[RMDB]
The record gives the reactivity of an RNA of 207 nucleotides to 2A3 and DMS. The DMS profile rests on 1,447 reads. Values cover nucleotides 27 to 156. Source: RMDB library RSTRND, as collected in RNAgym.
RNA sequence: GGGAACGACUCGAGUAGAGUCGAAAAGGCCUAGUCUGGUCCCCCCCGAAUAGCACUGGGGGAGAAUUCAGGCGACACACUGGAUGCGGGGAACUCUCGUUAGGCGUUUGGUACCACCCAGCAGGAUAACACCCUGCUGGUUCCAAUGAUACGGGCACAAGGUGAAUAUCUUCGGAUAUUCACCUUGAAAAGAAACAACAACAACAAC
Reactivity to 2A3 in 0.01 (KOAc 150mM, MgCl2 10mM, bicine 150mM(pH8.5), 24C), signal-to-noise 1, nucleotides 027 to 156: g060g000c010c010u020a030g040u070c020u010g000g060u020c000c000c000c000c000c000c000g110a160a200u180a160g040c090a040c190u050g010g010g000g090g000a060g010a000a070u300u270c000a020g040g010c020g030a010c020a000c000a020c080u100g060g100a060u110g060c050g000g050g000g010a090a100c020u050c020u000c150g040u000u060a080g060g040c070g030u000u010u070g000g000u060a040c010c020a010c010c000c010a000g000c000a000g020g000a010u080a190a050c020a130c050c000c020u000g070c010u010g010g000u020u000c010c010a070a020u060g050a020u020a130c070g010g030g000c040a030
Reactivity to DMS in 0.01 (KOAc 150mM, MgCl2 10mM, bicine 150mM(pH8.5), 24C), signal-to-noise 1, nucleotides 027 to 156: g040g080c020c020u000a060g030u010c020u000g030g000u020c000c020c000c000c010c000c010g000a060a070u000a040g040c140a210c160u020g000g020g050g040g010a060g000a050a130u010u000c040a020g000g000c000g000a150c060a080c060a080c040u000g000g010a300u000g010c120g000g000g010g000a070a040c090u000c010u020c030g020u000u010a010g000g040c020g010u000u000u060g010g010u000a070c010c010a230c300c010c010a000g020c000a070g000g010a300u010a090a140c030a300c090c000c010u000g010c020u000g060g000u000u000c030c000a080a150u010g000a060u020a000c030g030g010g040c080a200